Annotation: The record gives the reactivity of an RNA of 177 nucleotides to 2A3 and DMS. It was measured as part of the RMDB library OK2TRN. DMS adducts were read by reverse transcription with MarathonRT.
RNA sequence: GGGAACGACUCGAGUAGAGUCGAAAACAAAGUGUGCGAAACACUGCACAAAUAUAAAGAAGACGUCGCGCUGAUGAAAAACAUUGGCUUUAACUCAUUUCGCACGUCAAUUCAGUGGUCGCGUUUGAGGACGCGACUUGUUCGCAAGUCGCGUCCUAAAAGAAACAACAACAACAAC
Reactivity to 2A3 in 0.01 (KOAc 150mM, MgCl2 10mM, bicine 150mM(pH8.5), 24C), signal-to-noise 1, nucleotides 027 to 126: c040a000a050a050g210u170g050u070g110c040g050a050a020a000c010a010c000u070g000c090a170c020a060a200a000u230a030u100a120a200a040g090a090a020g000a000c010g010u060c090g000c010g000c070u000g000a000u000g030a030a000a170a000a000c010a040u140u210g070g050c000u110u020u090a080a030c020u020c020a010u000u020u010c010g000c020a010c000g000u030c020a020a040u040u040c020a000g000u030g060g000u050c000g060c080g020u040u040u220g120
Reactivity to DMS in 0.01 (KOAc 150mM, MgCl2 10mM, bicine 150mM(pH8.5), 24C), signal-to-noise 1, nucleotides 027 to 126: c100a090a080a130g010u020g010u000g000c030g010a010a050a160c030a020c010u010g020c300a140c140a050a090a020u000a080u010a040a110a140g000a130a220g000a020c000g020u030c080g000c020g060c190u000g010a020u010g000a010a010a000a010a060c030a300u060u010g010g000c110u000u030u000a130a100c100u000c000a000u000u000u000c010g020c000a020c010g000u000c010a030a060u000u030c000a020g010u000g000g000u000c010g010c090g010u000u010u010g000